This 177-nucleotide RNA was probed chemically with DMS and 2A3. Reactivities are given for positions 27 through 126.

[RMDB]
RNA sequence: GGGAACGACUCGAGUAGAGUCGAAAAGUCAUUAUGUUCGCAUAAUGACAAAUAUAUGGGACUAUAUAAAACCUGAUAGCCGUCCAAGAUCAUGUAACGGCAAAAACAGACGAUUCGUCGUCUGUAACUCAAUAGCGGUGUUCGCACCGCUAUUGAGAAAAGAAACAACAACAACAAC
Reactivity to DMS in 0.01 (KOAc 150mM, MgCl2 10mM, bicine 150mM(pH8.5), 24C), signal-to-noise 1, nucleotides 027 to 126: g000u000c000a030u000u000a010u010g010u010u030c210g050c010a030u000a000a000u000g000a010c010a030a050a020u000a030u000a030u010g000g000g000a170c130u000a020u000a050u020a080a110a010a230c000c000u020g000a110u000a140g010c000c030g010u000c110c040a080a090g000a100u010c220a050u000g050u010a070a010c000g000g000c000a070a040a020a040a050c000a010g000a000c020g000a010u000u000c210g030u000c010g000u000c010u010g000u000a040a140
Reactivity to 2A3 in 0.01 (KOAc 150mM, MgCl2 10mM, bicine 150mM(pH8.5), 24C), signal-to-noise 2, nucleotides 027 to 126: g010u000c000a000u000u000a000u020g040u020u050c260g000c070a010u000a000a000u000g000a000c000a000a160a000u090a000u020a060u050g000g030g070a070c090u040a020u010a030u010a300a110a020a040c010c010u020g070a170u080a060g000c000c020g000u000c030c020a100a010g140a230u220c050a050u150g060u160a050a010c020g000g030c020a130a000a000a000a000c020a010g020a000c010g000a000u000u070c180g050u000c000g000u000c090u010g020u000a010a030
For 2A3 the reverse transcriptase was SuperScript II with manganese.